[RMDB]
An RNA of 177 nucleotides, treated with DMS and 2A3 and read out base by base. The 2A3 profile rests on 1,583 reads. DMS adducts were read by reverse transcription with MarathonRT. It was measured as part of the RMDB library M2PK50. 2A3 adducts were read by reverse transcription with SuperScript II with manganese. Values cover nucleotides 27 to 126.

RNA sequence: GGGAACGACUCGAGUAGAGUCGAAAAUCGAUGGCGUUCGCGCCAUCGAAGAGCCGUACCGCGUAGCACGCGCAUAGGAGUGAAGAUAUCCAAGGCCAUGGAGGAGGCGUGCUUUCGAGCACGCCAACCAAUUGUGUCCGUUCGCGGACACAAUUGGAAAAGAAACAACAACAACAAC
Reactivity to DMS in 0.01 (KOAc 150mM, MgCl2 10mM, bicine 150mM(pH8.5), 24C), signal-to-noise 2, nucleotides 027 to 126: u020c000g000a020u010g000g010c010g030u000u000c300g020c010g000c000c010a000u000c010g000a000a130g000a070g000c030c010g020u010a110c080c000g000c070g000u010a060g010c100a210c090g060c040g010c050a090u000a110g000g000a070g050u010g000a100a050g020a110u010a090u000c070c040a090a080g000g010c030c020a080u000g010g000a020g000g010a180g010g000c000g050u000g000c000u000u000u000c150g000a010g020c000a000c000g000c000c000a000a030
Reactivity to 2A3 in 0.01 (KOAc 150mM, MgCl2 10mM, bicine 150mM(pH8.5), 24C), signal-to-noise 1, nucleotides 027 to 126: u020c000g000a000u010g000g000c060g040u020u030c280g010c010g040c090c020a000u000c000g000a010a000g000a010g040c000c030g000u050a010c000c040g050c020g030u020a030g050c150a020c100g040c020g000c020a040u100a080g020g060a060g050u090g100a040a090g040a140u170a050u080c050c000a020a030g060g000c040c000a050u080g040g020a090g030g030a040g020g000c000g010u000g000c010u030u020u010c180g020a000g000c000a000c000g010c000c030a000a000